[RMDB]
RNA sequence: GGGAACGACUCGAGUAGAGUCGAAAAGAAACAAGAUCCGACAUCUUGUCGCAAAUAGGUAAAUAAUGCGACUAAAGCGGCUUCACGUACAUGCCGUACGGUUACUGUCUCACUAGCGGGCAACGCUAUAUCCUGCAUCAUUCGUGAUGCAGGAUAUAAAAGAAACAACAACAACAAC
Reactivity to DMS in 0.01 (KOAc 150mM, MgCl2 10mM, bicine 150mM(pH8.5), 24C), signal-to-noise 5, nucleotides 027 to 126: g000a120a070a040c060a080a050g020a070u000c050c030g020a090c050a080u020c070u010u010g000u010c020g000c030a030a060a140u030a060g030g020u030a100a070a090u030a080a250u000g000c000g000a010c000u020a030a090a100g010c010g020g000c130u020u000c090a250c090g030u000a040c060a070u010g000c120c100g010u000a050c030g010g000u000u010a110c040u000g000u010c010u010c010a050c090u010a040g020c020g020g020g000c140a060a040c050g030c050u000
Reactivity to 2A3 in 0.01 (KOAc 150mM, MgCl2 10mM, bicine 150mM(pH8.5), 24C), signal-to-noise 9, nucleotides 027 to 126: g030a010a070a010c060a030a030g020a060u070c020c010g050a020c050a190u040c070u060u080g010u000c010g000c010a030a090a100u210a140g230g090u250a090a110a070u180a070a090u080g000c000g000a000c020u050a010a050a020g010c020g020g010c030u120u090c130a110c100g070u100a030c020a100u140g090c050c040g020u050a050c020g010g010u020u070a070c020u040g030u060c000u010c040a040c040u040a020g030c030g040g050g020c090a150a080c020g000c030u000